RNA sequence: GGGAACGACUCGAGUAGAGUCGAAAAGCACUAAGCUUGCCAUCAAUAUGGGUGCCGCGGAGGAGUCCACGGCAUUCAGGUUGGCUAAGGAGGGAUGAACCGGGCCAGGGGUGAAAACCAGCAGCCAAGAGUUCCCGUGGUAAGCAGUAGUGGGAUAGCGUAGGAUAUAGUUCGCUAUAUCCUACGCAAAAGAAACAACAACAACAAC
Reactivity to 2A3 in 0.01 (KOAc 150mM, MgCl2 10mM, bicine 150mM(pH8.5), 24C), signal-to-noise 1, nucleotides 027 to 156: g110c000a000c020u020a040a050g000c000u000u000g030c000c010a070u030c030a000a070u020a050u100g000g020g000u000g000c000c010g030c020g050g000a060g110g100a160g160u010c000c010a000c000g000g000c000a000u000u000c000a000g010g000u000u020g030g020c030u030a070a060g090g030a060g020g050g000a010u090g040a070a080c010c010g030g010g000c010c040a060g020g060g010g000u050g100a010a040a010a010c000c000a000g100c010a000g000c010c010a070a030g060a040g020u030u020c000c000c000g010u010g000g000u030a010a010g000c060a030g110u030a000g000u040g000g040g070a150u170a080